[RMDB]
RNA sequence: GGGAACGACUCGAGUAGAGUCGAAAAUAGGUCCAACGUUCGCGUUGGACCUAAAAAAAGCGUACUACCAGCCUGCAAUGGUAGUUCCCAAAUAGGAAGCCAUUGAACUACAGGUCUGGUAUCGCAAAAAAUAGGCACUUAUUCGUAAGUGCCUAAACCAACCUUGUUCUUUCGAGAACAAGGUUGGAAAAGAAACAACAACAACAAC
Reactivity to 2A3 in 0.01 (KOAc 150mM, MgCl2 10mM, bicine 150mM(pH8.5), 24C), signal-to-noise 1, nucleotides 027 to 156: u090a000g000g000u000c010c000a000a000c020g000u080u080c240g020c010g090u000u000g000g000a000c020c000u000a000a000a000a000a000a000a000g030c020g020u060a110c020u020a000c080c010a000g050c000c000u010g020c000a000a020u000g020g020u160a190g090u000u000c070c000c020a160a250a020u240a090g000g000a020a020g040c010c000a010u000u020g010a090a080c100u210a060c300a000g040g050u050c080u000g000g000u000a000u070c000g000c020a040a040a000a000a010a010u030a010g010g010c000a000c010u020u010a000u090u070c100g130u050a020a000g000u010g040c000c000u000a000a000a000

Structure probing data (2A3) for a 207-nucleotide construct. The RNA was probed in 150 mM KOAc, 10 mM MgCl2 and 150 mM bicine (pH 8.5) at 24 C. As a SHAPE reagent, 2A3 marks flexible, mostly unpaired nucleotides at the ribose 2'-OH.